[RMDB]
Record summary
Chemical mapping of a 177-nucleotide RNA with 2A3 and DMS. In probing experiments dimethyl sulfate is read out at A N1 and C N3, which are open when not base-paired. The DMS profile rests on 2,062 reads. The RNA was probed in 150 mM KOAc, 10 mM MgCl2 and 150 mM bicine (pH 8.5) at 24 C. 2A3 adducts were read by reverse transcription with SuperScript II with manganese.
RNA sequence: GGGAACGACUCGAGUAGAGUCGAAAAUGCGGGGCGCCCACUGCGGCCGCCAAGAGCUCGUCUCUGUCAGCCUCGGGUGCACGUGGGCCCGCGGUCGAGCCCUAAGGCCGGGCGUGGGGCUGGGGUCAGUACGACGGUAGUUCGCUACCGUCGUACUAAAAGAAACAACAACAACAAC
Reactivity to 2A3 in 0.01 (KOAc 150mM, MgCl2 10mM, bicine 150mM(pH8.5), 24C), signal-to-noise 2, nucleotides 027 to 126: u200g000c020g010g000g000g040c040g140c000c000c000a030c020u070g020c030g010g040c050c020g040c030c000a050a000g010a000g000c010u050c150g140u010c090u000c020u080g130u080c050a000g030c000c000u050c000g060g020g050u030g000c020a020c130g030u050g000g000g030c000c000c000g010c000g000g050u020c020g000a050g000c000c000c020u080a110a030g020g010c000c000g000g010g010c060g020u050g010g000g020g050c050u040g030g000g000g010u100c040
Reactivity to DMS in 0.01 (KOAc 150mM, MgCl2 10mM, bicine 150mM(pH8.5), 24C), signal-to-noise 2, nucleotides 027 to 126: u040g010c040g000g020g000g020c110g000c030c000c000a090c070u000g000c030g000g000c000c010g050c260c110a060a070g000a010g040c020u020c170g010u050c030u010c020u000g050u030c190a150g000c080c020u000c030g020g020g010u000g030c050a020c140g030u000g000g000g030c030c010c060g000c020g000g000u020c000g000a200g000c000c000c060u000a100a120g000g020c010c030g000g000g090c050g030u000g000g000g000g000c070u000g000g000g020g000u000c100